[RMDB]
RNA sequence: GGGAACGACUCGAGUAGAGUCGAAAAUUGUUAGUGUUCUGGCCAUGAGGUUUAAUAAAUAACAUGGGAACAAUAAUAAUAAUCCAGUGUCCCCUCCCUUCAUUGUCCCCAGAGUUACCAGUGGUUACAGACCCGGACUUCCUGUGAGGCGCCGCUGUCCCUAACUGAAAUUCGUUUCAGUUAGGGAAAAAGAAACAACAACAACAAC
Reactivity to DMS in 0.01 (KOAc 150mM, MgCl2 10mM, bicine 150mM(pH8.5), 24C), signal-to-noise 2, nucleotides 027 to 156: u000u010g010u000u010a070g000u010g000u000u000c010u000g020g000c010c000a050u000g020a200g060g020u000u000u000a040a180u010a080a090a120u020a070a100c010a060u000g020g020g010a020a010c000a000a020u000a040a060u000a070a140u000a030a180u020c030c030a090g010u000g000u000c010c010c010c040u010c020c050c040u000u050c110a110u010u000g020u000c020c000c000c010a070g000a100g010u010u000a040c060c000a160g020u000g000g010u010u000a100c060a100g010a060c020c030c030g010g020a080c050u000u000c040c030u000g010u000g030a090g000g020c050g030c020c030g000c060u000g020
This 207-nucleotide RNA was probed chemically with DMS. The reactions ran in a buffer of 150 mM KOAc, 10 mM MgCl2 and 150 mM bicine (pH 8.5), at 24 C. For DMS the reverse transcriptase was MarathonRT. Source: RMDB library OK3TST, as collected in RNAgym. Reactivities are given for positions 27 through 156. For DMS, 3,423 sequencing reads were counted.